Overview: This 177-nucleotide RNA was probed chemically with DMS and 2A3. DMS adducts were read by reverse transcription with MarathonRT.
RNA sequence: GGGAACGACUCGAGUAGAGUCGAAAAGGCAGGAAUAGAAUGGGCCGAAUCUAGGGUCUCACUGCAGGCCAGAUGCUAUUUUUGUUUGGCGCACGGCCUGGUGAAUGAUCCGGCUGUGUUCUAAGCGCAAUAUUAUUUUUUUCGAAAAAUAAUAUUGAAAAGAAACAACAACAACAAC
Reactivity to DMS in 0.01 (KOAc 150mM, MgCl2 10mM, bicine 150mM(pH8.5), 24C), signal-to-noise 8, nucleotides 027 to 126: g010g010c020a100g000g010a110a090u010a030g000a050a020u010g000g000g020c010c010g010a060a040u010c050u010a120g020g010g010u020c070u010c020a030c030u020g030c040a010g020g010c000c000a090g000a140u020g000c010u000a010u020u020u030u030u050g010u010u020u010g000g010c030g030c080a090c070g010g010c000c000u010g010g010u010g000a000a050u020g010a010u000c010c000g000g000c010u000g020u020g010u000u000c010u000a050a140g000c090g000
Reactivity to 2A3 in 0.01 (KOAc 150mM, MgCl2 10mM, bicine 150mM(pH8.5), 24C), signal-to-noise 9, nucleotides 027 to 126: g080g030c040a010g060g120a090a110u100a070g040a040a040u090g020g020g000c010c020g030a020a030u070c080u140a060g100g020g070u010c010u010c030a020c030u200g050c020a000g010g000c000c000a020g040a080u060g000c010u040a140u100u110u040u100u140g240u090u110u140g040g000c010g000c020a010c020g000g000c000c000u000g000g000u000g000a000a040u060g000a000u000c010c000g000g000c000u110g080u040g020u180u000c020u030a060a030g040c030g000
Background:
For 2A3, 12,685 sequencing reads were counted. The data come from the RNA Mapping Database (RMDB), library OK1LIB.